[RMDB]
RNA sequence: GGGAACGACUCGAGUAGAGUCGAAAAAUAAAAUGUUAGCUGCUGUGUAUAAGUCUCUUUUGAUAGCAGAUUCUAUGUGAUCUCUGGAAUUCUCUUGCACCGUUUAGCAAUUUCCGACCCAAUGCCGCUGGAUCGUGGGUUUCGACCCAUGAUCCAGAAAAGAAACAACAACAACAAC
Reactivity to 2A3 in 0.01 (KOAc 150mM, MgCl2 10mM, bicine 150mM(pH8.5), 24C), signal-to-noise 7, nucleotides 027 to 126: a000u240a000a060a030a030u140g050u090u090a020g020c010u020g010c000u000g020u010g060u070a040u080a280a070g050u050c000u020c000u100u090u100u140g080a070u080a030g050c040a000g020a060u090u040c080u070a100u100g110u090g110a080u010c020u000c020u070g040g060a100a080u160u000c020u000c000u020u050g020c030a020c030c030g050u030u060u100a020g000c000a020a040u030u060u060c020c020g030a050c030c010c010a030a050u090g070c050c030g020
Reactivity to DMS in 0.01 (KOAc 150mM, MgCl2 10mM, bicine 150mM(pH8.5), 24C), signal-to-noise 2, nucleotides 027 to 126: a050u090a050a050a100a070u020g020u000u000a060g020c000u020g000c030u000g010u020g010u010a060u010a090a050g000u000c030u020c030u000u010u010u010g030a030u010a040g000c100a050g020a120u000u030c050u010a040u000g000u010g010a060u020c080u000c000u010g000g000a070a050u030u010c030u000c040u000u010g010c050a020c050c020g000u000u010u020a060g000c060a030a080u000u020u030c010c040g010a040c020c000c030a060a020u040g000c080c030g000

This 177-nucleotide RNA was probed chemically with 2A3 and DMS. 2A3 is a SHAPE reagent: it acylates the 2'-hydroxyl of flexible nucleotides of all four kinds. For 2A3, 6,586 sequencing reads were counted. It was measured as part of the RMDB library OK1LIB.